[RMDB]
RNA sequence: GGGAACGACUCGAGUAGAGUCGAAAACGUUGUCAUCGACAACACCCUAUGCAUUCAUGCUCUGUAAGGACGCGCCGAAAGGUGAGCAAGCCCGAGUUGCCCAGACCUGAAAUGCAACACUUUAGAGAAAACCCGAAGCAGUUCGCUGCUUCGGGAAGAUUAGCGAUAUGUUCGCAUAUCGCUAAUCAAAAGAAACAACAACAACAAC
Reactivity to 2A3 in 0.01 (KOAc 150mM, MgCl2 10mM, bicine 150mM(pH8.5), 24C), signal-to-noise 6, nucleotides 027 to 156: c090g000u000u000g010u010c100a240u140c300g010a000c000a000a010c000a050c010c000c010u070a120u110g010c010a030u010u010c010a010u070g020c070u010c010u030g060u070a060a080g020g020a030c020g000c000g010c030c000g080a110a040a000g040g000u070g070a070g050c050a060a030g020c000c010c020g120a110g070u110u150g070c020c020c000a000g020a020c000c000u030g020a080a030a050u020g020c010a060a050c040a020c070u210u230u240a120g030a010g010a100a110a030a030c000c000c010g000a000a000g000c000a010g020u070u160c180g040c130u010g000c000u010u000c010g010g000g000a000a000
Reactivity to DMS in 0.01 (KOAc 150mM, MgCl2 10mM, bicine 150mM(pH8.5), 24C), signal-to-noise 2, nucleotides 027 to 156: c110g020u000u000g020u000c020a170u000c090g000a110c030a040a060c030a160c040c020c020u000a160u000g030c040a110u010u000c020a040u010g010c020u000c020u010g030u000a110a130g020g010a050c010g010c050g000c030c040g030a090a110a180g020g000u000g040a100g030c040a120a150g000c030c020c000g010a180g030u030u000g000c040c030c000a060g000a040c020c030u000g010a040a060a060u000g000c010a070a120c060a140c080u000u000u000a090g020a150g000a100a050a090a190c000c010c000g030a040a010g050c010a050g030u000u000c300g030c010u010g030c000u010u000c000g010g000g010a000a000